[RMDB]
RNA sequence: GGGAACGACUCGAGUAGAGUCGAAAAGAUAUGGAUCCAUCGGACUCCCUGUGGCGUUGAAAUCGGAAACGAUGGAGCCACCUGGAGAAAGUUGGAUCCUAAGUCAAAAGAAUCCUUCGGGAUUCAACAAUACAAGCUACUUCGGUAGCUUGUAUUGAAAAGAAACAACAACAACAAC
Reactivity to 2A3 in 0.01 (KOAc 150mM, MgCl2 10mM, bicine 150mM(pH8.5), 24C), signal-to-noise 1, nucleotides 027 to 126: g020a010u060a020u190g000g000a000u000c020c000a010u000c000g020g030a030c000u000c000c000c000u000g000u010g010g000c020g210u300u040g010a030a040a000u010c020g000g050a020a070a060c020g000a020u010g010g000a000g000c000c000a000c000c020u010g010g000a000g000a000a000a000g010u020u010g000g000a000u000c000c000u000a000a010g010u000c030a020a000a000a250g010a000a010u010c020c000u050u140c300g120g000g000a010u000u000c000a000a010
Reactivity to DMS in 0.01 (KOAc 150mM, MgCl2 10mM, bicine 150mM(pH8.5), 24C), signal-to-noise 4, nucleotides 027 to 126: g000a060u000a300u000g000g000a010u000c010c010a000u000c000g010g010a300c010u000c000c000c020u000g000u000g010g020c000g020u000u000g000a060a160a020u000c010g000g000a120a090a130c010g010a000u000g000g010a110g030c000c000a000c010c010u000g000g000a010g030a000a120a230g000u000u000g000g010a020u000c000c000u000a000a080g000u000c020a070a090a170a120g000a020a000u000c000c000u000u010c200g010g010g010a000u000u000c000a100a160
The data come from the RNA Mapping Database (RMDB), library TTRDEL. The record gives the reactivity of an RNA of 177 nucleotides to 2A3 and DMS. The 2A3 profile rests on 4,102 reads. 2A3 adducts were read by reverse transcription with SuperScript II with manganese. DMS adducts were read by reverse transcription with MarathonRT. The RNA was probed in 150 mM KOAc, 10 mM MgCl2 and 150 mM bicine (pH 8.5) at 24 C. For DMS, 2,653 sequencing reads were counted. Reactivities are given for positions 27 through 126.